[RMDB]
RNA sequence: GGGAACGACUCGAGUAGAGUCGAAAAAUUGGGCGAGCGGGUCGGCUCAAAGACGGAUACGCCAUAGUGUGUGGAGAUGUUGAUAGAGCUGUAAACGUCAUCUCUCCUGAUGUUCUUUAUGGUGCUGCACUCACUGGGCAUUCGUGCCCAGUGAGUGAAAAGAAACAACAACAACAAC
Reactivity to DMS in 0.01 (KOAc 150mM, MgCl2 10mM, bicine 150mM(pH8.5), 24C), signal-to-noise 2, nucleotides 027 to 126: a070u010u000g020g010g020c010g000a070g000c100g000g000g010u000c060g030g000c020u020c060a040a070a140g000a040c070g010g000a210u000a070c080g010c010c020a130u010a090g000u000g000u000g060u010g010g000a000g020a160u020g000u000u010g010a100u020a170g000a110g010c150u010g030u020a070a080a100c050g050u000c020a020u000c030u000c040u000c020c030u010g010a050u010g000u000u000c050u000u010u000a030u020g020g000u000g000c180u000g010
Reactivity to 2A3 in 0.01 (KOAc 150mM, MgCl2 10mM, bicine 150mM(pH8.5), 24C), signal-to-noise 1, nucleotides 027 to 126: a000u020u000g000g000g000c040g030a040g010c060g010g090g010u010c030g030g020c000u030c030a070a040a000g030a000c010g040g010a010u040a100c010g010c010c060a060u200a100g210u270g010u100g000u030g060g040a050g000a020u080g030u060u030g060a150u100a170g060a010g040c000u040g130u260a190a110a020c030g010u010c030a050u010c000u020c010u040c000c000u060g040a090u120g070u110u000c070u090u150u080a150u230g000g000u050g000c070u140g000